This 177-nucleotide RNA was probed chemically with DMS and 2A3. The 2A3 profile rests on 3,903 reads. The DMS profile rests on 1,423 reads. Conditions: 150 mM KOAc, 10 mM MgCl2 and 150 mM bicine (pH 8.5), 24 C. For DMS the reverse transcriptase was MarathonRT. For 2A3 the reverse transcriptase was SuperScript II with manganese.
[RMDB]
RNA sequence: GGGAACGACUCGAGUAGAGUCGAAAAGAUAUGGACUCCUACAAAGAGCUAUGAAGUGUGUGGCCGAGUCACAUCGGAAACGAUGUGAUAGUGCCACACAUGGAGCUCAAAAAGGGAGUCCUAAGUCCCCGUAUACUGAGUUCGCUCAGUAUACGGGAAAAGAAACAACAACAACAAC
Reactivity to DMS in 0.01 (KOAc 150mM, MgCl2 10mM, bicine 150mM(pH8.5), 24C), signal-to-noise 2, nucleotides 027 to 126: g020a040u000a150u020g000g000a040c000u010c010c000u020a210c270a160a120a210g040a020g060c000u000a300u010g000a110a210g000u030g000u010g030u000g000g010c010c060g000a280g020u000c000a000c000a000u000c000g010g000a050a070a100c000g010a000u000g020u000g000a020u000a060g030u010g010c020c000a000c000a000c000a000u000g000g010a020g010c010u020c000a020a060a090a150a190g020g000g000a000g030u000c000c000u000a030a070g020u010c040
Reactivity to 2A3 in 0.01 (KOAc 150mM, MgCl2 10mM, bicine 150mM(pH8.5), 24C), signal-to-noise 1, nucleotides 027 to 126: g000a040u030a000u060g000g000a000c000u000c000c000u020a060c180a070a260a020g020a020g000c010u090a300u300g030a040a000g010u020g000u010g010u000g050g000c020c040g040a050g080u010c000a010c010a010u000c010g000g000a030a020a020c010g000a010u000g000u000g010a000u020a000g040u160g000c000c000a000c010a000c000a000u000g000g010a010g000c000u020c030a050a090a000a000a000g000g000g000a000g000u000c000c000u000a010a010g010u000c010